[RMDB]
RNA sequence: GGGAACGACUCGAGUAGAGUCGAAAAGAUAUGGACGGUGGAGACAUGCGAUACAUUCGGAAACGAAUGUUCGCAACAGCUCCAAGCCGUCCUAAGUCAAACCCUGUGCAGUUCGCUGCACAGGGAACUCGAUUUAUCUGUUCGCAGAUAAAUCGAGAAAAGAAACAACAACAACAAC
Reactivity to DMS in 0.01 (KOAc 150mM, MgCl2 10mM, bicine 150mM(pH8.5), 24C), signal-to-noise 2, nucleotides 027 to 126: g000a030u000a230u010g010g010a000c000g030g020u000g000g000a030g020a030c150a210u020g000c010g010a010u020a020c010a000u020u000c010g020g000a100a060a170c000g000a000a000u000g000u000u010c000g020c000a040a050c260a110g020c000u000c000c010a080a170g020c020c000g010u000c000c000u010a020a090g000u000c000a090a160a140c000c000c000u000g000u000g000c000a000g030u000u010c300g010c000u000g010c000a000c000a030g000g010g000a000a020
Reactivity to 2A3 in 0.01 (KOAc 150mM, MgCl2 10mM, bicine 150mM(pH8.5), 24C), signal-to-noise 2, nucleotides 027 to 126: g010a000u010a010u110g000g000a000c010g000g040u080g070g000a020g020a070c190a220u300g010c000g020a020u090a300c000a000u050u020c000g020g000a010a040a020c000g020a000a000u010g000u010u000c010g000c000a040a020c080a030g000c020u000c000c010a000a020g050c000c000g000u000c000c000u020a030a010g010u000c030a070a030a300c030c000c000u000g000u000g000c010a040g000u020u210c260g110c260u000g000c010a000c000a020g000g000g000a000a010
Overview
Structure probing data (DMS and 2A3) for a 177-nucleotide construct. The 2A3 profile rests on 5,774 reads. Reactivities are given for positions 27 through 126. Source: RMDB library TTRDES, as collected in RNAgym. Conditions: 150 mM KOAc, 10 mM MgCl2 and 150 mM bicine (pH 8.5), 24 C. Reactivities are rounded to 0.1 and cut off at 0 and 3.